Chemical mapping of a 177-nucleotide RNA with 2A3 and DMS. Source: RMDB library OK1LIB, as collected in RNAgym. The reactions ran in a buffer of 150 mM KOAc, 10 mM MgCl2 and 150 mM bicine (pH 8.5), at 24 C. Reactivities are given for positions 27 through 126.

RNA sequence: GGGAACGACUCGAGUAGAGUCGAAAAGGAAAGAACUUGGUGAUGAUGCUGGUGAAGGUGAUUUAGUUUGGAUGACAGGUCUCCUAAAUUUUGGUGAUCCAAAUUAUGGUGCAGGUGGUCCAGAAGGAAAAAUACCAUCCUUCGGGAUGGUAUUUUUAAAAGAAACAACAACAACAAC
Reactivity to 2A3 in 0.01 (KOAc 150mM, MgCl2 10mM, bicine 150mM(pH8.5), 24C), signal-to-noise 5, nucleotides 027 to 126: g030g030a060a040a070g030a040a040c040u100u070g010g020u080g010a040u040g000a020u060g020c050u030g010g030u090g060a100a040g020g000u070g070a120u020u060u100a040g040u000u050u050g060g000a020u030g040a040c020a080g040g040u020c040u030c030c010u100a120a150a260u130u160u090u080g050g010u080g090a020u010c000c000a000a000a030u050u040a090u130g010g030u080g000c010a020g010g050u060g020g030u040c010c010a040g040a060a060g050g060
Reactivity to DMS in 0.01 (KOAc 150mM, MgCl2 10mM, bicine 150mM(pH8.5), 24C), signal-to-noise 5, nucleotides 027 to 126: g000g010a050a060a070g010a040a060c080u010u030g000g010u000g010a070u010g000a050u010g000c050u000g000g010u000g000a040a060g010g020u010g000a060u020u020u010a070g010u000u000u000g000g010a060u010g010a060c060a080g000g020u010c050u010c030c030u010a040a060a100u020u010u020u010g000g010u020g010a080u020c010c030a010a030a040u010u000a060u010g000g010u000g010c070a070g020g010u000g000g010u000c050c010a050g010a080a080g010g020
2A3 adducts were read by reverse transcription with SuperScript II with manganese.